Source: RMDB library M2RFPK, as collected in RNAgym. Chemical mapping of a 207-nucleotide RNA with 2A3. Conditions: 150 mM KOAc, 10 mM MgCl2 and 150 mM bicine (pH 8.5), 24 C. For 2A3, 889 sequencing reads were counted.
RNA sequence: GGGAACGACUCGAGUAGAGUCGAAAAAGCUCGAUUACGAUCGAUCAAUGAUGCCCCUCACCCACCUCUGAAGAUCCCAGGUGGGCGAGGGAACGGAGCACGGGAUCACGAGCAGUACGCUGCUCGAAAAAGAACUAGACCUUCGGGUCUAGUUCAAGCAAACUAUGUUCUUCGGAACAUAGUUUGCAAAAGAAACAACAACAACAAC
Reactivity to 2A3 in 0.01 (KOAc 150mM, MgCl2 10mM, bicine 150mM(pH8.5), 24C), signal-to-noise 1, nucleotides 027 to 156: a010g020c000u000c020g020a060u110u090a140c100g030a040u010c010g040a040u190c110a060a170u280g060a060u140g100c000c000c020c000u000c010a050c000c020c000a000c010c010u080c060u090g030a050a010g000a010u020c010c020c000a000g000g000u010g000g020g000c000g000a000g000g000g000a020a020c020g080g030a130g000c080a070c070g000g000g000a010u030c020a010c020g010a000g000c000a000g000u020a020c150g040c090u000g000c000u000c000g010a010a010a000a000a000g000a000a010c000u000a000g000a000c020c000u010u110c260g030g020g000u000c000u000a000g000u020u000c000a000a000